Chemical mapping of a 177-nucleotide RNA with 2A3 and DMS. Source: RMDB library VIROID, as collected in RNAgym. For DMS the reverse transcriptase was MarathonRT. For 2A3, 19,010 sequencing reads were counted. For 2A3 the reverse transcriptase was SuperScript II with manganese.
RNA sequence: GGGAACGACUCGAGUAGAGUCGAAAAUAGGAGGAUAUUUGGACAUUCCGUUAGCCGUAUCAAUUGGACACGAUCCAAUUGAACGCCCAGGGCGGACCGCGAGGAGGUUCGAAUGUCCGAUGCCGCCCAUUAACUCUUAGUUCGCUAAGAGUUAAUGAAAAGAAACAACAACAACAAC
Reactivity to 2A3 in 0.01 (KOAc 150mM, MgCl2 10mM, bicine 150mM(pH8.5), 24C), signal-to-noise 8, nucleotides 027 to 126: u130a020g010g020a010g000g010a040u030a090u130u050u050g030g000a020c040a050u100u000c040c020g020u030u090a030g020c040c020g040u080a140u300c000a000a010u000u010g000g010a010c040a040c300g170a270u000c000c000a000a000u000u000g000a010a000c020g010c000c030c010a040g070g040g000c040g020g030a060c030c020g010c040g050a120g060g060a030g020g020u020u010c010g020a010a010u010g000u000c000c010g000a010u030g030c010c010g030c000c000
Reactivity to DMS in 0.01 (KOAc 150mM, MgCl2 10mM, bicine 150mM(pH8.5), 24C), signal-to-noise 9, nucleotides 027 to 126: u010a110g010g010a170g000g010a050u000a020u000u000u000g020g000a020c000a070u010u000c000c070g020u010u000a120g030c100c030g000u000a130u000c000a000a010u000u000g000g000a010c040a170c300g000a290u000c000c000a000a010u000u000g000a020a060c070g010c070c060c130a100g010g010g020c010g010g000a040c050c070g010c170g000a120g010g010a110g000g010u000u000c040g000a020a010u000g010u000c000c000g010a070u000g010c010c010g000c010c010